[RMDB]
RNA sequence: GGGAACGACUCGAGUAGAGUCGAAAAGAAAGAAGAAAAACCGUGUGAACUAUGAUGGCCUUACAAAACUCGACGAAAAGAAACACUUGAUACUACCGAAAGCUAGAGCUGCUGCAUACGGAAGAAACAUGAUCAUGGCAUUCGUGCCAUGAUCAUGAAAAGAAACAACAACAACAAC
Reactivity to 2A3 in 0.01 (KOAc 150mM, MgCl2 10mM, bicine 150mM(pH8.5), 24C), signal-to-noise 4, nucleotides 027 to 126: g080a030a040a000g170a040a040g130a030a040a000a010a010c010c030g020u030g010u020g080a060a100c060u020a070u230g040a060u050g050g000c000c000u060u060a030c060a070a080a050a040c060u050c070g060a020c020g080a090a030a030a110g100a000a070a000c060a010c010u040u030g080a040u020a140c010u020a050c030c050g110a130a010a000g000c030u040a030g000a000g050c010u030g000c000u030g000c010a000u040a050c010g020g010a070a010g040a010a090a000
Reactivity to DMS in 0.01 (KOAc 150mM, MgCl2 10mM, bicine 150mM(pH8.5), 24C), signal-to-noise 3, nucleotides 027 to 126: g030a100a060a080g010a080a120g010a070a070a120a120a040c040c010g000u000g040u000g000a120a090c060u010a010u000g010a080u010g000g010c010c000u030u000a030c170a050a090a050a120c050u000c060g050a110c140g000a040a040a070a080g030a090a080a040c070a080c160u000u010g000a100u010a040c150u010a070c090c080g000a050a050a040g000c020u000a020g000a140g000c020u000g000c030u000g000c030a000u010a040c060g000g010a060a020g040a100a090a140